[RMDB]
RNA sequence: GGGAACGACUCGAGUAGAGUCGAAAAGGCCUCAUGAUGAGAUUCUCGAAAUUUUGGAUACUGCUGAAGAAACUCUUCGUUCUUGCAUUCAAGGACUUAACAUUGAUGCAAAAAUAGUUCGUAAAGACUAUGGACUUUUAUUCGUAAAAGUCCAUAGAAAAGAAACAACAACAACAAC
Reactivity to DMS in 0.01 (KOAc 150mM, MgCl2 10mM, bicine 150mM(pH8.5), 24C), signal-to-noise 3, nucleotides 027 to 126: g010g010c120c010u000c060a080u000g010a180u000g020a060g010a140u000u010c040u000c050g010a070a100a110u000u000u010u030g010g020a140u000a070c090u000g010c080u000g010a100a070g000a100a090a080c050u000c050u000u000c030g000u000u010c030u000u000g010c060a060u010u020c020a020a030g010g020a170c170u010u000a050a090c090a060u000u000g000a030u000g000c010a000a040a060a060a090u010a090g010u000u000c050g010u020a060a060a110g010a140
Reactivity to 2A3 in 0.01 (KOAc 150mM, MgCl2 10mM, bicine 150mM(pH8.5), 24C), signal-to-noise 1, nucleotides 027 to 126: g030g050c000c010u030c020a060u140g090a070u060g020a010g000a030u070u000c050u000c070g040a150a110a090u200u230u090u060g090g000a060u040a140c030u130g080c040u090g070a030a030g020a060a110a060c040u000c000u010u020c040g040u070u000c000u010u020g010c000a040u070u220c030a020a020g040g020a070c050u120u130a070a030c080a080u030u060g000a010u030g000c000a000a070a000a020a090u100a060g050u040u010c060g040u060a000a120a000g030a010
Structure probing data (DMS and 2A3) for a 177-nucleotide construct. For DMS, 2,058 sequencing reads were counted. Conditions: 150 mM KOAc, 10 mM MgCl2 and 150 mM bicine (pH 8.5), 24 C. The data come from the RNA Mapping Database (RMDB), library OK2TST.